The record gives the reactivity of an RNA of 177 nucleotides to DMS and 2A3. Conditions: 150 mM KOAc, 10 mM MgCl2 and 150 mM bicine (pH 8.5), 24 C. The 2A3 profile rests on 712 reads. It was measured as part of the RMDB library OK1LIB.

[RMDB]
RNA sequence: GGGAACGACUCGAGUAGAGUCGAAAAGAAGGAGAUGAAAGCGACUUUAGAAUCGGCUAACUGAGCAGACAGAUACAGACGGCAAGUAUCGUCGCCAGAGAUACAGUCGCAACUAGCCGGAGGAGAACCUCAUGCCGGUAUUCGUACCGGCAUGAGGAAAAGAAACAACAACAACAAC
Reactivity to DMS in 0.01 (KOAc 150mM, MgCl2 10mM, bicine 150mM(pH8.5), 24C), signal-to-noise 1, nucleotides 027 to 126: g000a150a130g010g000a090g000a240u000g000a030a070a060g000c010g000a060c000u020u000u000a070g070a240a060u000c000g100g120c000u000a300a300c150u110g000a170g000c060a060g000a150c060a000g000a000u000a000c000a160g000a160c110g000g030c180a010a050g000u060a000u000c000g000u000c000g000c040c000a000g000a090g010a250u000a010c270a000g000u000c000g000c090a140a100c000u000a000g060c000c000g030g000a120g000g000a110g000a150a000
Reactivity to 2A3 in 0.01 (KOAc 150mM, MgCl2 10mM, bicine 150mM(pH8.5), 24C), signal-to-noise 2, nucleotides 027 to 126: g120a020a110g170g100a060g030a010u170g090a100a000a060g000c030g020a000c020u110u190u080a000g080a080a060u060c000g100g000c060u040a100a040c020u060g000a060g070c020a050g000a000c000a060g030a000u010a050c000a020g200a100c060g050g100c140a220a000g000u000a020u000c000g000u000c000g000c050c000a000g000a000g000a000u080a050c040a000g000u000c000g000c010a000a010c020u030a000g030c000c000g000g000a010g050g060a210g000a050a000